[RMDB]
Structure probing data (2A3 and DMS) for a 177-nucleotide construct. Conditions: 150 mM KOAc, 10 mM MgCl2 and 150 mM bicine (pH 8.5), 24 C. It was measured as part of the RMDB library OK2TRN.

RNA sequence: GGGAACGACUCGAGUAGAGUCGAAAACACUAAUUCCAAAGAGUUCUACAGGGACCACUAAUAGGGCUUUGAGCCAGUCCAGUACAUUCAUACUAGGAUUGAAUGACAAUCAAGUGGUGGUGUAAUCAGACGUACAUACUUUCGAGUAUGUACGUCUAAAAGAAACAACAACAACAAC
Reactivity to 2A3 in 0.01 (KOAc 150mM, MgCl2 10mM, bicine 150mM(pH8.5), 24C), signal-to-noise 3, nucleotides 027 to 126: c070a020c050u100a120a170u110u060c040c010a090a090a000g130a010g030u050u020c030u110a140c050a060g100g110g030a030c020c000a000c010u060a080a090u030a160g020g010g020c010u060u070u140g030a040g000c010c020a000g000u000c010c000a010g040u020a050c010a070u050u170c010a010u020a100c040u080a120g190g000a120u040u020g040a080a060u080g020a030c030a050a100u130c030a110a010g020u010g020g000u000g000g010u030g020u040a050a090u120c070
Reactivity to DMS in 0.01 (KOAc 150mM, MgCl2 10mM, bicine 150mM(pH8.5), 24C), signal-to-noise 3, nucleotides 027 to 126: c110a100c090u010a070a130u000u010c010c010a100a110a090g000a110g000u000u000c020u000a040c100a110g020g010g010a080c020c020a020c010u000a080a120u020a100g010g010g000c010u000u000u010g010a180g040c100c120a050g010u000c000c010a070g010u010a070c060a080u000u010c100a100u000a110c090u010a100g020g000a030u000u010g010a050a060u000g000a070c120a070a070u010c110a070a050g000u000g010g010u000g000g020u000g000u000a050a090u000c150